[RMDB]
The record gives the reactivity of an RNA of 177 nucleotides to DMS and 2A3. For 2A3, 2,671 sequencing reads were counted.
RNA sequence: GGGAACGACUCGAGUAGAGUCGAAAAUCAAACCCGCCCUUGUAGCUCAGUGGUAGAGCGCUUCACUCGAAUUCCAAUACUGCCAUGAAGAGGUCCGCGGUUCAAUCCCGCGUGGUGGCAAAAAAAAGAUAAUGAUUCAGUUCGCUGAAUCAUUAUCAAAAGAAACAACAACAACAAC
Reactivity to DMS in 0.01 (KOAc 150mM, MgCl2 10mM, bicine 150mM(pH8.5), 24C), signal-to-noise 3, nucleotides 027 to 126: u010c070a060a090a160c020c010c020g020c060c030c040u010u000g020u000a050g020c020u000c020a080g030u000g000g010u000a050g010a090g020c050g000c050u000u000c030a070c040u010c050g010a110a130u000u010c030c020a050a120u010a090c120u010g000c020c010a050u000g020a080a100g020a090g010g010u010c070c030g010c010g010g000u000u000c210a130a230u020c290c000c000g000c030g010u000g010g010u000g000g000c030a010a000a010a030a050a030a070a080
Reactivity to 2A3 in 0.01 (KOAc 150mM, MgCl2 10mM, bicine 150mM(pH8.5), 24C), signal-to-noise 2, nucleotides 027 to 126: u100c010a010a010a130c010c010c020g010c030c030c000u120u070g110u130a050g010c010u010c090a030g010u030g080g020u050a030g020a030g060c030g000c000u030u050c010a090c050u060c040g070a070a070u150u000c020c000a060a070u080a220c060u040g000c020c010a020u030g040a100a100g010a020g080g040u030c030c020g000c000g000g000u010u040c030a030a070u080c020c000c000g000c000g000u020g000g030u000g010g000c000a050a030a010a000a030a030a020a060
The RNA was probed in 150 mM KOAc, 10 mM MgCl2 and 150 mM bicine (pH 8.5) at 24 C. For DMS the reverse transcriptase was MarathonRT. For DMS, 2,721 sequencing reads were counted. High DMS reactivity at an A or C suggests that its Watson-Crick edge is free.